[RMDB]
RNA sequence: GGGAACGACUCGAGUAGAGUCGAAAAUGCAAAUACUGAUGAGAUUCUUAAAGAAUUGCGUUGCGUAAUCGCUAAGAAUUUUACUGGGCACAUUAUGCAAACUCCAACGGCUUUUUCGGCUAUCAAAGGUAUGGGUGAUCUUCGGAUCACCCAUACCAAAAGAAACAACAACAACAAC
Reactivity to 2A3 in 0.01 (KOAc 150mM, MgCl2 10mM, bicine 150mM(pH8.5), 24C), signal-to-noise 2, nucleotides 027 to 126: u040g000c000a010a000a020u180a190c030u070g060a130u080g080a020g010a010u030u000c000u000u110a120a030a000g050a130a070u040u050g000c020g150u180u270g060c040g030u020a060a000u000c000g020c140u040a080a000g000a030a020u000u000u000u000a000c040u000g090g000g010c130a100c000a070u090u190a010u300g010c000a010a010a010c070u070c000c000a050a050c010g000g020c000u210u100u000u010u090c020g020g020c050u040a080u220c090a080a080a000
The record gives the reactivity of an RNA of 177 nucleotides to 2A3. Values cover nucleotides 27 to 126. Source: RMDB library OK1LIB, as collected in RNAgym. For 2A3, 454 sequencing reads were counted.